[RMDB]
RNA sequence: GGGAACGACUCGAGUAGAGUCGAAAAUUGCUUUACUGACGACCAGUUAAUCGACUUUAUGCUGCAAUAUCCAAUCCUGAUUAAUCGUCCGAUCGUGGUGACGCCGUUGGGAACUCGGUUGUGCCGCAACACGUGCACGGUUCGCCGUGCACGUGUUAAAAGAAACAACAACAACAAC
Reactivity to DMS in 0.01 (KOAc 150mM, MgCl2 10mM, bicine 150mM(pH8.5), 24C), signal-to-noise 1, nucleotides 027 to 126: u030u000g030c100u010u000u000a070c100u000g000a060c120g010a070c080c020a060g010u000u000a110a200u030c020g000a060c060u000u000u000a040u030g010c100u000g000c060a010a080u000a090u000c070c040a060a050u000c000c010u000g000a070u000u000a070a060u010c070g010u000c060c110g030a040u010c100g030u010g000g020u000g000a040c090g000c080c080g000u000u030g010g030g010a040a150c020u010c010g030g010u000u000g020u000g000c000c090g000c140
Reactivity to 2A3 in 0.01 (KOAc 150mM, MgCl2 10mM, bicine 150mM(pH8.5), 24C), signal-to-noise 1, nucleotides 027 to 126: u070u080g040c050u100u060u110a070c010u030g110a040c030g020a030c020c080a040g020u080u140a020a090u090c010g030a050c050u100u100u050a090u140g050c060u030g080c020a140a070u010a070u110c010c020a000a030u020c020c000u070g010a090u160u060a090a010u110c000g030u020c000c050g030a110u060c060g100u030g000g020u040g000a020c080g050c010c040g010u030u030g070g000g000a030a020c020u000c010g000g000u000u130g080u040g040c000c000g000c000
Chemical mapping of a 177-nucleotide RNA with DMS and 2A3. It was measured as part of the RMDB library OK2TST. The reactions ran in a buffer of 150 mM KOAc, 10 mM MgCl2 and 150 mM bicine (pH 8.5), at 24 C.